RNA sequence: GGGAACGACUCGAGUAGAGUCGAAAAGCGCAGCGACGCGAGUCGCGCCCUGCGCGAGCAGCUGAAAAAGACGGGUCUGCAGGAAAAGCUCGUGGAGGGCGUCAGCGCGGGCAUCCACGGCGCGGUCGACCUGGGCCGCCAGCGGCUCGAGCGGGCCGGGUGAUUAAGCAUUCGUGCUUAAUCACCCAAAAGAAACAACAACAACAAC
Reactivity to 2A3 in 0.01 (KOAc 150mM, MgCl2 10mM, bicine 150mM(pH8.5), 24C), signal-to-noise 1, nucleotides 027 to 156: g000c010g020c050a070g000c010g030a040c000g050c050g040a040g000u050c030g010c010g000c000c000c040u050g040c010g000c000g000a000g030c000a010g050c020u020g120a030a050a070a070a030g170a150c100g050g000g000u080c090u230g120c060a060g090g000a070a070a040a030g000c030u020c050g010u010g000g110a040g050g090g000c040g030u080c010a050g040c040g000c000g020g000g040c010a010u020c040c010a040c050g030g000c070g000c020g050g020u040c030g010a050c000c030u040g040g010g000c000c010g050c000c000a000g020c010g050g010c000u010c010g010a030g000c000g010g000g000c010c110